[RMDB]
RNA sequence: GGGAACGACUCGAGUAGAGUCGAAAAGAUAUGGACGAAGAACUCGAACUACGAUUCUAUGUCGGAAACGACAUUCUAUCGCGAGGGAGUCCUAAGUCAAAGUUUUUAGGCUUCGGCCUAAAAACAAGUAGAUGUAUGACUUCGGUCAUACAUCUACAAAAGAAACAACAACAACAAC
Reactivity to 2A3 in 0.01 (KOAc 150mM, MgCl2 10mM, bicine 150mM(pH8.5), 24C), signal-to-noise 4, nucleotides 027 to 126: g040a010u080a030u120g020g000a010c040g170a260a160g030a160a060c000u000c030g050a200a140c130u170a090c300g000a020u070u020c020u050a010u020g000u000c010g000g020a050a030a010c010g000a010c000a010u030u000c030u070a040u020c020g010c010g090a010g000g040g010a010g000u010c000c000u020a090a010g040u010c060a110a060a140g010u010u000u000u030u010a000g010g010c010u040u080c300g160g010c000c000u010a000a000a000a000a000c010a010a020
Reactivity to DMS in 0.01 (KOAc 150mM, MgCl2 10mM, bicine 150mM(pH8.5), 24C), signal-to-noise 4, nucleotides 027 to 126: g010a120u010a190u000g000g000a030c010g020a240a090g000a050a090c000u010c010g010a150a210c090u000a180c010g010a010u000u000c010u000a000u000g040u000c010g000g000a070a070a210c000g010a020c000a000u010u010c020u010a010u000c010g020c060g010a040g020g000g000a070g010u000c000c000u000a030a190g010u000c010a120a120a160g000u000u000u000u000u000a000g000g020c010u000u010c260g030g000c000c000u000a000a010a010a010a000c000a060a100

Structure probing data (2A3 and DMS) for a 177-nucleotide construct. The data come from the RNA Mapping Database (RMDB), library TTRDEL. DMS adducts were read by reverse transcription with MarathonRT. Reactivities are given for positions 27 through 126. For 2A3, 7,732 sequencing reads were counted. The RNA was probed in 150 mM KOAc, 10 mM MgCl2 and 150 mM bicine (pH 8.5) at 24 C.